[RMDB]
RNA sequence: GGGAACGACUCGAGUAGAGUCGAAAAGCCACAUAUCCCGUGACAUUGCGAAAGCAAGGCUGGCGGUAGGUAGUCCUAGGCGGCGACAGCCUUGGACUGCGGCGUAAAGGUGUACCUGGGGCCGUUAUAACGCGGUAACAGUUCGCUGUUACCGCAACCUUAACAUAGCGUUCGCGCUAUGUUAAGGAAAAGAAACAACAACAACAAC
Reactivity to DMS in 0.01 (KOAc 150mM, MgCl2 10mM, bicine 150mM(pH8.5), 24C), signal-to-noise 2, nucleotides 027 to 156: g020c020c010a060c070a060u010a130u010c100c030c040g010u000g030a050c020a160u000u000g020c030g020a150a120a250g000c000a030a030g020g040c000u000g000g020c040g020g040u000a060g010g050u010a010g000u000c010c010u010a030g050g040c000g030g050c080g000a140c060a170g000c010c030u000u010g020g020a060c000u010g020c010g010g010c010g030u000a050a050a110g030g030u010g020u000a040c050c020u000g010g030g060g040c050c020g000u000u000a060u000a090a150c090g010c000g000g000u000a000a000c010a020g030u000u000c220g000c010u010g010u000u000a020c000c000g010c000a010a010
Reactivity to 2A3 in 0.01 (KOAc 150mM, MgCl2 10mM, bicine 150mM(pH8.5), 24C), signal-to-noise 3, nucleotides 027 to 156: g040c010c010a030c010a050u160a020u040c010c010c000g010u050g050a030c080a160u020u050g000c020g070a100a000a010g010c040a020a010g010g050c040u010g010g010c010g020g000u050a050g040g050u020a000g000u000c000c020u040a000g020g010c040g030g080c140g110a030c100a040g000c000c000u000u020g000g000a000c010u000g000c000g000g030c020g020u070a070a090a000g040g000u060g040u100a080c010c010u020g010g000g100g000c010c000g020u010u020a090u050a150a060c170g000c010g000g000u000a000a000c000a030g010u040u050c150g050c130u000g000u000u000a010c000c000g000c010a000a000